RNA sequence: GGGAACGACUCGAGUAGAGUCGAAAAUCUGUUGACAAGUAAUCGUAAAGUCGAAGUCGGACUACGGUUGCGGCAACAGAAGUCAGUUAGCCUCAAGUCCGACUUGGACUAUUGCUAGAACUGAUCACUACAGGUUAGUAUUCGUACUGACCUGUAGAAAAGAAACAACAACAACAAC
Reactivity to 2A3 in 0.01 (KOAc 150mM, MgCl2 10mM, bicine 150mM(pH8.5), 24C), signal-to-noise 7, nucleotides 027 to 126: u010c010u020g050u050u070g040a030c030a100a010g010u010a030a030u020c020g010u010a010a010a010g000u000c080g070a010a000g000u010c000g000g000a000c000u010a010c030g000g000u010u010g000c000g000g000c010a060a040c030a200g150a120a010g020u010c030a040g000u030u160a000g000c000c010u040c110a080a010g000u000c000c000g000a010c000u000u010g020g000a000c000u030a130u080u030g000c000u000a010g000a020a010c010u010g010a040u050c020a010
Reactivity to DMS in 0.01 (KOAc 150mM, MgCl2 10mM, bicine 150mM(pH8.5), 24C), signal-to-noise 9, nucleotides 027 to 126: u010c030u000g010u000u000g010a090c110a090a090g010u000a040a130u010c140g010u000a010a060a040g010u000c000g010a040a030g010u000c040g010g000a020c000u000a180c300g010g010u000u000g020c040g000g010c010a050a090c170a100g010a090a100g000u000c020a050g020u000u010a040g010c010c040u000c150a100a070g000u000c000c000g010a040c060u010u010g000g010a010c000u000a040u000u000g000c010u000a070g000a100a030c010u000g000a120u000c100a150
Structure probing data (2A3 and DMS) for a 177-nucleotide construct.
Conditions: 150 mM KOAc, 10 mM MgCl2 and 150 mM bicine (pH 8.5), 24 C.
DMS adducts were read by reverse transcription with MarathonRT.
Reactivities are given for positions 27 through 126.
2A3 adducts were read by reverse transcription with SuperScript II with manganese.